[RMDB]
RNA sequence: GGGAACGACUCGAGUAGAGUCGAAAAAGGCAUCGCCUUCAUAGACAAGGCGUCCUACGUAUUCCGUAGGUAUCUGAAGGUAUACGGAUUCAGCAUCACUUUCCGCAACCUUUGUCCAGACUUCGAAUUUGUGCGGCGCCUGCAUGCACUUAACGUAUAUCGUGCAAAGUUUCGACUUUGCACGAUAAAAAGAAACAACAACAACAAC
Reactivity to DMS in 0.01 (KOAc 150mM, MgCl2 10mM, bicine 150mM(pH8.5), 24C), signal-to-noise 2, nucleotides 027 to 156: a060g030g010c030a160u010c070g020c010c020u020u000c060a080u000a090g000a120c050a030a040g020g000c000g020u000c020c010u000a010c040g030u010a130u010u000c100c020g020u000a030g010g020u000a010u020c090u000g010a030a050g000g010u000a160u000a070c060g010g000a060u000u000c080a070g010c090a150u000c140a100c030u000u000u000c010c000g040c050a110a060c020c000u010u000u000g000u010c070c050a090g050a090c080u000u000c050g010a040a150u000u000u020g020u000g000c110g030g000c010g020c070c040u050g000c000a050u000g000c030a070c060u000u010a030a070c130g010u000a150
Reactivity to 2A3 in 0.01 (KOAc 150mM, MgCl2 10mM, bicine 150mM(pH8.5), 24C), signal-to-noise 4, nucleotides 027 to 156: a000g060g000c030a090u090c110g000c010c000u060u020c090a210u170a130g070a150c070a050a030g000g000c000g010u030c000c000u010a000c010g050u070a100u120u160c090c040g020u030a000g000g030u060a080u030c050u080g010a010a000g030g000u030a150u010a120c010g000g010a020u050u150c050a060g040c070a160u120c060a070c040u040u070u010c010c000g010c030a010a020c020c000u030u000u080g040u010c030c000a020g010a110c030u100u050c060g050a060a060u030u030u150g010u000g020c020g000g020c030g020c010c040u050g020c030a030u080g020c010a010c020u080u090a110a030c050g080u130a020